[RMDB]
RNA sequence: GGGAACGACUCGAGUAGAGUCGAAAAGGAGGACGAAGCAUAUUUCUGUUUCUGGAGGAUUAUUUAUAAUCUGCCGGAAAGUCUUGCAGGUGGCUGGGAUAUGUUCAGUCUGGUAGAAGUAAGCACGAAAACGUGUCCUUGUUCGCAAGGACACGAAGCACCAAUAAUGGUUCGCCAUUAUUGGUGCAAAAGAAACAACAACAACAAC
Reactivity to 2A3 in 0.01 (KOAc 150mM, MgCl2 10mM, bicine 150mM(pH8.5), 24C), signal-to-noise 2, nucleotides 027 to 156: g060g030a010g000g000a020c020g020a050a020g010c030a020u050a050u090u100u040c060u050g120u010u040u000c010u010g020g020a100g000g000a020u030u000a020u040u240u050a110u030a020a030u010c000u040g080c020c030g010g030a040a040a000g050u060c020u090u120g030c050a060g030g170u110g000g050c030u040g000g020g000a020u040a000u050g090u070u050c050a000g000u000c010u010g000g020u050a010g020a100a000g030u160a000a100g050c030a010c120g130a010a060a100a010c020g030u010g010u020c000c000u000u000g000u020u020c120g000c110a010a000g010g020a020c000a000c000g000a000a000
Reactivity to DMS in 0.01 (KOAc 150mM, MgCl2 10mM, bicine 150mM(pH8.5), 24C), signal-to-noise 1, nucleotides 027 to 156: g010g010a060g020g010a120c040g020a140a180g020c040a060u000a030u010u000u000c000u030g050u010u010u010c000u010g010g000a040g010g000a010u000u000a010u000u010u000a090u000a100a000u000c000u010g020c020c000g040g000a030a030a050g020u000c010u000u010g030c100a110g000g050u030g000g020c050u010g020g060g000a090u000a030u010g020u000u000c050a240g020u000c000u000g040g020u000a080g000a050a140g000u000a040a050g000c060a140c080g000a080a040a080a110c050g030u000g020u000c000c000u000u000g010u000u000c300g010c040a030a020g000g010a020c000a020c000g000a010a090